[RMDB]
RNA sequence: GGGAACGACUCGAGUAGAGUCGAAAAGAGGCGGGGUUAACCCAUACUAUGGGAACUGCUGGGUUCCUCGGAUGUCGAUCCCCUCUCCCGUUCGGGAAAAGGGGGACUCCGGAACUCCCUGCAGGUUCUAAUAACACUACUUCGGUAGUGUUAUUAGAAAAGAAACAACAACAACAAC
Reactivity to 2A3 in 0.01 (KOAc 150mM, MgCl2 10mM, bicine 150mM(pH8.5), 24C), signal-to-noise 1, nucleotides 027 to 126: g070a050g040g030c100g030g040g000g030u090u130a130a110c010c010c000a020u140a140c150u170a140u120g030g000g000a040a060c000u010g000c010u020g020g020g000u020u000c000c010u000c060g000g000a090u260g030u040c050g060a250u150c010c000c000c010u020c010u010c000c000c010g110u300u300c180g000g020g010a010a050a030a040g030g020g010g000g010a000c000u000c000c000g000g010a010a010c040u040c040c000c000u010g020c010a000g080g000u000u000
Reactivity to DMS in 0.01 (KOAc 150mM, MgCl2 10mM, bicine 150mM(pH8.5), 24C), signal-to-noise 2, nucleotides 027 to 126: g000a090g000g020c060g000g000g010g020u010u010a100a150c010c000c000a100u000a110c200u020a150u000g000g000g010a090a110c020u000g000c010u010g000g000g010u000u000c060c040u000c050g010g010a020u010g010u000c030g020a120u030c010c000c000c000u000c190u000c000c000c000g000u000u020c220g000g000g010a010a030a030a040g010g020g010g010g000a010c010u000c000c000g010g010a040a070c170u000c010c040c030u000g010c000a040g020g010u010u000